[RMDB]
RNA sequence: GGGAACGACUCGAGUAGAGUCGAAAAUUAGAGCAAACUAAUUGAAGUUGUGUUUUGACACACUUUCCAAAUUCACGGGUGCUGCAUGACAUAUUCACAACACUACUGCCGCACAGCCAUGGUGACAGACCAUAUCGGUUUUCGAACCGAUAUGGUCAAAAGAAACAACAACAACAAC
Reactivity to 2A3 in 0.01 (KOAc 150mM, MgCl2 10mM, bicine 150mM(pH8.5), 24C), signal-to-noise 5, nucleotides 027 to 126: u040u020a020g020a010g150c080a050a050a100c010u010a010a020u040u020g030a060a010g050u140u120g030u010g040u030u090u140u300g200a020c010a000c000a000c000u020u010u000c010c000a060a030a110u100u090c010a040c050g010g000g030u060g020c000u000g000c040a060u100g040a050c030a020u180a100u130u160c060a030c040a180a070c020a070c070u090a020c040u050g000c010c010g020c010a000c000a030g060c030c000a060u140g030g010u030g030a020c070a020
Reactivity to DMS in 0.01 (KOAc 150mM, MgCl2 10mM, bicine 150mM(pH8.5), 24C), signal-to-noise 3, nucleotides 027 to 126: u000u000a010g010a140g000c120a160a220a150c000u000a000a000u000u000g000a060a100g050u010u000g100u010g030u000u000u050u020g010a080c000a020c010a030c010u000u000u030c010c020a070a060a060u040u010c040a090c030g020g020g000u000g010c020u000g000c040a040u020g000a130c270a090u000a070u010u050c140a120c230a040a040c130a030c130u020a060c120u020g000c030c080g010c030a030c030a080g000c040c050a130u050g040g040u000g010a050c300a080